[RMDB]
RNA sequence: GGGAACGACUCGAGUAGAGUCGAAAAGAGAUCCUCAAGGAUCUCGCCGGCAUGCGCGCGCAGCUCACGCAGCUGCGCCUCGCCGCUGGCGCGGGGCCGGCUCCGGGCAGCGGCAGCCGCGCCGCGGCGACUUUCGGGAUUUCGAUCCCGAAAGUCGAAAAGAAACAACAACAACAAC
Reactivity to DMS in 0.01 (KOAc 150mM, MgCl2 10mM, bicine 150mM(pH8.5), 24C), signal-to-noise 2, nucleotides 027 to 126: g010a010g010a000u000c000c010u020c270a180a190g020g000a000u000c000u000c000g010c040c000g030g030c140a070u000g020c120g000c290g000c010g010c000a010g010c010u000c030a130c250g020c110a020g030c010u000g000c010g010c000c030u010c070g020c000c040g000c020u000g070g010c000g020c000g000g000g000g000c000c010g010g000c010u010c030c100g000g000g010c110a050g000c010g000g010c000a020g030c000c010g000c000g020c000c010g020c010g000g010
Reactivity to 2A3 in 0.01 (KOAc 150mM, MgCl2 10mM, bicine 150mM(pH8.5), 24C), signal-to-noise 2, nucleotides 027 to 126: g010a010g000a000u000c020c030u200c210a080a300g020g000a000u000c000u010c000g000c010c000g000g110c130a120u210g070c100g000c000g000c000g010c120a010g020c010u000c020a170c150g100c190a000g000c010u000g000c000g000c000c000u040c020g010c000c000g000c260u300g000g000c050g000c000g000g030g020g010c050c020g300g080c080u080c100c110g110g180g000c100a030g000c030g040g040c020a010g150c020c010g000c000g010c000c010g010c010g000g010
Notes
The record gives the reactivity of an RNA of 177 nucleotides to DMS and 2A3. Reactivities are given for positions 27 through 126. The RNA was probed in 150 mM KOAc, 10 mM MgCl2 and 150 mM bicine (pH 8.5) at 24 C.